[RMDB]
RNA sequence: GGGAACGACUCGAGUAGAGUCGAAAAGCGAAGGCUGGCUUUCAUGGAAAUAUAUGUUAAUAAAAUUCUGGGAUGGCACUGUGUAGGUUUGUAAUUUUGCCUUUGAGUGGUGACCCUCAAGAAACAGGGACCCGUGGUUACCAUUGAGUCCAGUCAAGAUAGUACGCAUCUUCGGAUGCGUACUAUCAAAAGAAACAACAACAACAAC
Reactivity to 2A3 in 0.01 (KOAc 150mM, MgCl2 10mM, bicine 150mM(pH8.5), 24C), signal-to-noise 2, nucleotides 027 to 156: g050c010g030a090a030g030g010c000u000g000g000c020u010u080u070c050a040u080g040g050a080a170a020u170a080u040a060u150g030u110u120a190a170u130a200a140a090a060u140u080c070u100g020g020g000a050u060g060g060c020a010c020u010g010u020g040u110a010g020g040u000u140u120g030u070a050a050u030u220u170u030g000c010c000u040u010u080g010a040g040u050g100g010u080g010a040c000c040c000u000c020a050a040g020a100a120a020c040a010g050g000g000a000c040c020c020g030u060g010g010u060u100a010c010c000a000u000u120g000a010g020u050c010c010a010g010u050c020a060a000
Reactivity to DMS in 0.01 (KOAc 150mM, MgCl2 10mM, bicine 150mM(pH8.5), 24C), signal-to-noise 1, nucleotides 027 to 156: g020c040g030a090a030g020g010c030u000g050g010c030u000u020u010c100a070u010g000g010a060a110a170u010a080u010a090u030g000u000u010a130a130u000a100a070a100a300u000u020c020u000g010g030g060a070u010g040g000c020a070c020u000g040u000g020u000a040g000g000u010u010u000g040u000a040a180u000u010u000u000g020c000c000u000u030u000g010a080g000u010g010g010u010g010a140c000c010c040u000c020a040a100g010a130a060a160c040a100g010g010g020a080c030c000c040g020u010g020g010u000u000a080c030c040a100u000u020g010a040g000u000c000c000a170g010u010c000a090a290
Background: This 207-nucleotide RNA was probed chemically with 2A3 and DMS. It was measured as part of the RMDB library OK3TST. Conditions: 150 mM KOAc, 10 mM MgCl2 and 150 mM bicine (pH 8.5), 24 C. For DMS the reverse transcriptase was MarathonRT. 2A3 is a SHAPE reagent: it acylates the 2'-hydroxyl of flexible nucleotides of all four kinds.